[RMDB]
RNA sequence: GGGAACGACUCGAGUAGAGUCGAAAAGUUGAUGCAACCAAACAGUACGACAUCAACGAAGCUAUCGCACUGCUGAAAGAGCUGGCGACUGCUAAAUUCGUAGAAAGCGUGGACGUAGCUGUUAACACCACGUGAGGGAGUUCGCUCCCUCACGUGGAAAAGAAACAACAACAACAAC
Reactivity to DMS in 0.01 (KOAc 150mM, MgCl2 10mM, bicine 150mM(pH8.5), 24C), signal-to-noise 1, nucleotides 027 to 126: g000u000u010g010a070u000g000c060a190a170c050c080a150a060a140c110a010g010u000a150c020g000a210c000a000u000c010a020a010c010g000a090a040g000c030u010a070u000c020g060c000a180c080u010g020c020u010g000a080a100a190g000a050g010c050u000g030g000c020g000a050c070u010g020c030u000a030a040a200u000u000c040g010u020a020g020a060a050a130g000c020g000u030g010g000a110c110g050u000a050g000c030u000g000u010u000a070a070c110a090
Reactivity to 2A3 in 0.01 (KOAc 150mM, MgCl2 10mM, bicine 150mM(pH8.5), 24C), signal-to-noise 1, nucleotides 027 to 126: g000u030u000g040a100u070g010c020a030a070c040c020a150a070a000c010a050g030u070a040c020g040a020c040a000u000c000a040a000c000g030a000a000g000c000u030a020u060c030g000c020a210c280u080g030c000u070g060a300a090a070g300a090g010c020u030g000g000c040g000a010c010u010g000c000u060a130a200a120u120u090c070g010u030a050g200a170a100a080g040c040g030u040g030g040a030c010g040u040a050g050c000u010g030u060u040a060a000c000a030

Annotation
The record gives the reactivity of an RNA of 177 nucleotides to DMS and 2A3. The RNA was probed in 150 mM KOAc, 10 mM MgCl2 and 150 mM bicine (pH 8.5) at 24 C. For 2A3, 930 sequencing reads were counted. The DMS profile rests on 794 reads. It was measured as part of the RMDB library OK2TST.